[RMDB]
RNA sequence: GGGAACGACUCGAGUAGAGUCGAAAAGUCAUGGCGGCGUUCUGCCUGUGUCAUGAGACGUUCUCCGUGAAAGUUAACUGACUGAAAAUGAUGUGAUUACUUUAAAGAGGGGGUCGGACAGGGUAUGAUUCCUCCCCAUGUUCGCAUGGGGAGGAAUAAAAGAAACAACAACAACAAC
Reactivity to 2A3 in 0.01 (KOAc 150mM, MgCl2 10mM, bicine 150mM(pH8.5), 24C), signal-to-noise 1, nucleotides 027 to 126: g000u010c010a040u100g080g000c030g090g000c090g080u200u070c060u130g030c020c000u140g070u050g000u000c020a030u100g050a020g000a010c030g150u050u000c030u000c010c030g000u170g200a070a010a010g000u030u030a010a030c030u030g090a030c000u020g030a140a040a080a020u070g020a010u030g000u000g010a010u170u090a080c030u030u070u090a050a200a000g070a080g030g010g010g000g000u030c030g020g000a000c010a070g060g080g000u150a090u230g050
Reactivity to DMS in 0.01 (KOAc 150mM, MgCl2 10mM, bicine 150mM(pH8.5), 24C), signal-to-noise 2, nucleotides 027 to 126: g020u000c030a010u000g000g010c020g010g000c050g000u010u020c100u010g000c020c010u010g040u000g010u000c020a070u010g000a090g020a230c080g010u000u000c000u000c020c080g030u020g020a040a030a070g000u010u000a180a060c040u000g000a300c300u000g010a030a050a130a050u000g000a070u000g010u000g010a220u000u020a020c030u000u000u010a060a120a080g020a090g000g020g000g000g000u000c020g010g000a080c070a070g000g000g020u000a050u000g010